[RMDB]
RNA sequence: GGGAACGACUCGAGUAGAGUCGAAAAUUGAGGAGACUUGCCGGUCAGAUCAGGCCACAGGAUCUGACUGGGACAUGCUCUGUGGCUGGGCCUGUCGGCGACUUGUCUGCGUGAGCGCCGGGGCCGAGGAGAACGCUGAGCAGACUGCGCCCGGAGACAUUAGACCGAGCUUCGGCUCGGUCUAAUGAAAAGAAACAACAACAACAAC
Reactivity to 2A3 in 0.01 (KOAc 150mM, MgCl2 10mM, bicine 150mM(pH8.5), 24C), signal-to-noise 1, nucleotides 027 to 156: u110u080g060a070g030g030a060g020a090c070u140u300g010c000c000g020g000u010c010a000g010a000u000c030a030g000g000c000c000a000c000a000g000g000a000u010c000u010g000a000c000u000g010g010g010a080c110a120u160g050c040u020c040u090g010u010g000g000c000u020g030g000g000c000c010u020g000u030c010g010g010c010g030a020c010u040u110g000u020c000u000g010c000g020u020g010a020g010c010g000c000c000g000g000g000g000c010c010g000a000g000g020a010g000a010a000c000g010c080u140g020a000g020c000a000g000a000c000u040g020c030g000c030c050c020g060g030a060g010a010